Source information:
Structure probing data (DMS and 2A3) for a 177-nucleotide construct. The reactions ran in a buffer of 150 mM KOAc, 10 mM MgCl2 and 150 mM bicine (pH 8.5), at 24 C. The 2A3 profile rests on 5,305 reads.
[RMDB]
RNA sequence: GGGAACGACUCGAGUAGAGUCGAAAACAUUCUGAAGAUGGUAGGCCAAGGAACCAUUUAAAAACCUGAACUGUCGCACAAUAGCUCCUCAUACAAUUCUGAGUGACAAAAAGUUCACUAAGGGGGGAUUAGGGUAAAGAUUCGUCUUUACCCUAAUAAAAGAAACAACAACAACAAC
Reactivity to DMS in 0.01 (KOAc 150mM, MgCl2 10mM, bicine 150mM(pH8.5), 24C), signal-to-noise 8, nucleotides 027 to 126: c100a120u010u000c060u010g010a130a090g010a050u000g000g020u000a060g010g020c030c050a070a070g010g010a090a070c040c030a060u000u000u010a070a060a060a090a070c070c040u010g010a050a050c090u000g000u000c070g010c070a050c100a050a080u000a090g000c050u000c010c010u000c080a060u010a080c140a060a090u000u000c050u000g000a040g010u000g010a020c060a060a070a110a140a130g000u010u000c010a010c020u000a080a060g010g000g010g010g010g000
Reactivity to 2A3 in 0.01 (KOAc 150mM, MgCl2 10mM, bicine 150mM(pH8.5), 24C), signal-to-noise 5, nucleotides 027 to 126: c010a050u090u080c020u120g100a100a050g040a050u040g000g050u050a020g030g050c050c050a030a020g050g010a040a060c010c010a010u060u110u240a100a110a020a030a030c010c020u010g030a030a020c030u030g020u050c020g020c040a030c020a060a060u050a080g010c020u030c020c000u040c020a050u080a210c070a080a100u130u090c020u070g050a010g000u010g010a000c010a000a300a100a040a030g040u100u030c000a000c010u020a030a050g050g000g000g000g010g000